[RMDB]
RNA sequence: GGGAACGACUCGAGUAGAGUCGAAAAGGGCAUACUCGUAGACCUUGCCUGACUGUGCUCAUGUCCAGGCAGGGGGGACAGUGUAUGCAAGAAUAAUUUGGAGUUCCUGCCAGCUCUAACCAGCUUCGUACAGCACCUUUUUCGAAAGGUGCUGUACAAAAGAAACAACAACAACAAC
Reactivity to DMS in 0.01 (KOAc 150mM, MgCl2 10mM, bicine 150mM(pH8.5), 24C), signal-to-noise 2, nucleotides 027 to 126: g010g000g000c000a010u030a000c010u000c090g010u000a100g020a090c010c000u000u000g000c010c000u000g000a040c000u040g000u050g020c160u090c120a030u050g000u000c120c070a010g010g010c000a020g000g010g000g000g000g000a050c040a180g020u020g000u000a010u010g000c010a080a070g020a100a040u040a100a060u000u010u000g000g020a170g000u000u000c010c010u000g030c130c050a090g010c010u010c040u010a050a120c150c200a030g000c080u030u000c260
Reactivity to 2A3 in 0.01 (KOAc 150mM, MgCl2 10mM, bicine 150mM(pH8.5), 24C), signal-to-noise 4, nucleotides 027 to 126: g060g040g000c010a000u000a000c000u000c010g070u050a040g110a100c000c000u000u000g020c010c000u020g010a010c020u050g070u160g150c050u120c150a090u240g010u050c160c000a000g000g000c000a000g010g020g000g000g020g020a010c040a080g010u010g000u010a000u010g000c020a000a010g060a000a130u210a040a080u060u050u160g090g020a060g010u050u030c000c000u000g040c020c020a040g000c010u000c020u020a030a060c040c040a000g030c010u090u090c090